[RMDB]
RNA sequence: GGGAACGACUCGAGUAGAGUCGAAAAGAAGAGAGGAAGAUUUAGGGGAAGAAGAUAACAAUAUUCACGCGGUCUUCCCGGUUACGUGUGUAGACACUAUGAUUGUUAUCAAAACUAAAUAUGAGAAACUAGGAGCUAGGUUCGCCUAGCUCCUAGUAAAAGAAACAACAACAACAAC
Reactivity to DMS in 0.01 (KOAc 150mM, MgCl2 10mM, bicine 150mM(pH8.5), 24C), signal-to-noise 2, nucleotides 027 to 126: g000a070a030g010a040g000a140g010g020a070a050g010a030u020u000u040a020g040g000g020g000a070a110g030a150a090g000a040u000a020a010c020a020a010u000a060u050u000c000a040c030g000c050g000g020u000c090u000u000c060c020c000g010g020u040u010a060c050g030u010g010u000g010u020a060g030a020c100a040c180u020a060u020g000a020u000u010g000u030u020a010u000c010a030a090a050a060c070u010a030a020a090u030a120u000g010a120g000a080a070
Reactivity to 2A3 in 0.01 (KOAc 150mM, MgCl2 10mM, bicine 150mM(pH8.5), 24C), signal-to-noise 2, nucleotides 027 to 126: g130a050a000g050a000g010a010g130g040a120a030g030a060u000u000u090a010g010g000g020g020a000a120g070a030a020g000a020u090a060a020c000a000a010u060a090u080u170c020a000c020g010c000g000g000u000c000u010u000c000c000c000g000g000u090u100a050c010g000u020g000u000g010u100a080g070a020c020a020c060u070a110u260g130a060u010u000g020u040u030a030u060c030a050a120a010a000c060u120a060a020a180u250a050u120g090a110g120a090a080